[RMDB]
RNA sequence: GGGAACGACUCGAGUAGAGUCGAAAACGAUCCGCUGCGCAUGGCCAGCGCGGCGCGUACGCGACGUAGUACGAUGCGCAUGGUACGGCCAUGGCGCUACGAUCAGUGCGCGAUCAGUCUGAUCGGCCGCUGCCCAGGAGUUCGCUCCUGGGCAGCGAAAAGAAACAACAACAACAAC
Reactivity to 2A3 in 0.01 (KOAc 150mM, MgCl2 10mM, bicine 150mM(pH8.5), 24C), signal-to-noise 1, nucleotides 027 to 126: c030g000a030u000c040c030g010c090u080g000c040g030c000a030u020g030g000c070c040a080g030c010g000c020g110g000c110g000c000g030u040a030c000g080c130g140a160c090g010u150a050g000u030a070c000g020a040u110g030c070g000c060a080u210g220g000u200a130c220g000g040c040c030a010u020g160g060c000g030c000u000a000c040g010a030u030c030a030g070u080g040c160g010c000g090a070u090c000a010g290u030c110u170g030a000u020c060g030g000c040
Structure probing data (2A3) for a 177-nucleotide construct. For 2A3, 1,005 sequencing reads were counted. The data come from the RNA Mapping Database (RMDB), library OK2TRN. Conditions: 150 mM KOAc, 10 mM MgCl2 and 150 mM bicine (pH 8.5), 24 C.